[RMDB]
RNA sequence: GGGAACGACUCGAGUAGAGUCGAAAAGAUAUGGAACAAUUCUCUAGCGUGUCGCGAGGAUCAUGGAGAUAGCUGACUGGUCGGAAACGACCAGUCCGAAACCAUGGGAGCGAUCGGGAUUGUUCCUAAGUCAAACAUCAUCGUUCGCGAUGAUGAACCUAAAUCAAGACUUCGGUCUUGAUUUAGGAAAAGAAACAACAACAACAAC
Reactivity to DMS in 0.01 (KOAc 150mM, MgCl2 10mM, bicine 150mM(pH8.5), 24C), signal-to-noise 2, nucleotides 027 to 156: g000a050u000a060u000g000g000a020a040c010a020a020u000u020c000u000c060u010a150g030c220g000u000g040u010c000g010c000g000a140g030g010a030u010c000a000u000g010g000a080g000a240u000a180g030c030u020g020a040c000u000g000g020u000c000g010g010a060a030a110c010g020a010c000c020a010g010u000c000c030g000a120a280a210c000c010a020u020g020g000g000a060g040c000g010a020u000c050g000g000g000a050u000u010g010u010u000c000c000u000a000a080g000u000c060a160a090a160c000a020u000c000a000u000c010g040u000u010c300g010c010g020a030u000g020a010u000g000a010a140
Reactivity to 2A3 in 0.01 (KOAc 150mM, MgCl2 10mM, bicine 150mM(pH8.5), 24C), signal-to-noise 7, nucleotides 027 to 156: g000a000u010a000u040g000g000a000a000c000a010a020u290u050c050u020c060u110a080g050c130g210u300g030u120c010g000c010g030a230g020g000a000u000c010a000u000g010g000a150g060a160u150a080g080c010u010g000a000c000u000g000g000u000c000g000g000a000a000a010c000g000a000c000c000a000g000u000c000c000g010a010a000a000c000c000a000u000g000g000g000a010g000c000g010a010u040c040g000g000g000a000u000u000g000u000u000c000c000u000a000a000g000u000c000a050a040a130c010a010u010c000a010u010c000g070u110u060c300g000c010g100a000u010g010a000u020g030a040a040